Conditions: 150 mM KOAc, 10 mM MgCl2 and 150 mM bicine (pH 8.5), 24 C. Structure probing data (2A3 and DMS) for a 207-nucleotide construct. 2A3 adducts were read by reverse transcription with SuperScript II with manganese. For DMS the reverse transcriptase was MarathonRT. For 2A3, 583 sequencing reads were counted. DMS (dimethyl sulfate) methylates the pairing face of unpaired adenines and cytosines. Reactivities are rounded to 0.1 and cut off at 0 and 3.
RNA sequence: GGGAACGACUCGAGUAGAGUCGAAAAUACCUUUGAUUAGUGUUUUGGUCUUUAUGCGUUUCACAGACCUGAUUCAAAUGCUGGAUCUCUGCUUUAUUAGCUUUGUGAUCUUGGACAUAUCCCUUAAUCUAGUUGAGCCAGAUUCUCAUUAUCUGCAAUACGUCCAUAGGUUCGCCUAUGGACGUAUAAAAGAAACAACAACAACAAC
Reactivity to 2A3 in 0.01 (KOAc 150mM, MgCl2 10mM, bicine 150mM(pH8.5), 24C), signal-to-noise 2, nucleotides 027 to 156: u170a020c000c000u050u010u160g080a100u030u070a060g070u020g070u080u070u070u100g040g000u020c040u030u120u040a080u220g150c070g080u120u150u180c110a140c030a030g020a000c000c030u060g030a030u050u120c080a000a060a110u070g000c000u020g000g060a070u000c030u000c000u060g030c040u000u130u140a140u140u150a100g010c000u100u090u160g040u050g010a030u020c010u000u110g020g000a010c010a030u110a060u060c050c000c000u050u230a120a120u050c070u040a070g020u110u050g030a020g050c050c060a000g000a050u110u050c070u000c120a110u060u300a030u020c000u000g020c010a020
Reactivity to DMS in 0.01 (KOAc 150mM, MgCl2 10mM, bicine 150mM(pH8.5), 24C), signal-to-noise 1, nucleotides 027 to 156: u010a100c010c030u010u000u000g000a100u010u010a040g010u000g000u010u000u000u000g020g020u010c020u000u030u000a050u000g000c080g050u010u020u000c020a110c090a070g010a090c050c030u000g010a070u000u000c070a100a080a110u010g020c070u010g030g030a090u010c020u010c080u000g010c020u000u000u000a050u020u000a100g020c030u000u000u000g020u010g020a070u060c070u000u020g010g020a100c040a080u000a080u000c030c010c040u000u000a050a090u000c050u010a070g000u000u000g020a020g000c000c100a080g010a070u010u010c090u000c030a100u000u000a080u000c030u020g040c100a190